This 170-nucleotide RNA was probed chemically with 2A3. Reactivities are given for positions 27 through 129. For 2A3, 1,517 sequencing reads were counted. The RNA was probed in 150 mM KOAc, 10 mM MgCl2 and 150 mM bicine (pH 8.5) at 24 C.
[RMDB]
RNA sequence: GGGAACGACUCGAGUAGAGUCGAAAAUUUGUGUUUACCUACAUUUUCUAUGGCACCUGUUGAAUUUUAUGAAGACCGCAUCUUGGACUUUAAAGUUCUUGAUAAUGGUAUCAUUAGGGAUGUAAAUGAGCCGGUCGGUUCGCCGACCGGAAAAGAAACAACAACAACAAC
Reactivity to 2A3 in 0.01 (KOAc 150mM, MgCl2 10mM, bicine 150mM(pH8.5), 24C), signal-to-noise 1, nucleotides 027 to 129: u010u010u270g110u070g080u110u160u160a050c000c020u000a050c000a000u070u000u020u000c000u000a000u000g030g000c000a000c000c000u090g010u060u070g060a030a090u000u070u110u130a000u060g000a050a000g080a050c060c000g030c080a050u040c000u000u150g000g000a000c030u090u000u190a090a200a000g000u000u000c000u000u010g000a000u020a210a120u110g000g000u010a080u010c000a000u000u010a000g000g000g070a000u040g010u040a040a040a040u120g010a050g050
Source: RMDB library 15KLIB, as collected in RNAgym.